The record gives the reactivity of an RNA of 207 nucleotides to 2A3. Reactivities are rounded to 0.1 and cut off at 0 and 3. Reactivities are given for positions 27 through 156.
[RMDB]
RNA sequence: GGGAACGACUCGAGUAGAGUCGAAAAGUCAUGCCUUCGGGCAUGACAGGUACCGAGAGGUACCAAAUAGCGUACAGGAGACACAGACUGUACGCUAAAAAAGUGUGUGUUCAAUAAGUGCCAAUUGAACACACACUAAAAUGGCACAAGUGUGUUAUAGUGGAAAAUGGUUCGCCAUUUUCCACUAAAAAGAAACAACAACAACAAC
Reactivity to 2A3 in 0.01 (KOAc 150mM, MgCl2 10mM, bicine 150mM(pH8.5), 24C), signal-to-noise 1, nucleotides 027 to 156: g000u000c000a000u000g000c000c000u020u030c150g060g000g040c000a000u000g020a000c000a010g010g000u030a000c000c000g020a050g000a040g080g000u020a030c020c020a080a000a000u110a000g000c000g010u000a000c000a000g030g010a000g030a110c010a000c000a030g050a040c010u000g020u000a000c000g000c000u000a020a000a000a000a000a010g010u010g000u000g000u000g000u000u020c060a060a020u140a230a000g070u030g150c000c000a020a020u020u000g000a000a000c000a000c000a000c000a000c000u000a000a000a000a000u030g070g020c040a020c000a200a000g110u020g000u000g010u030u040a120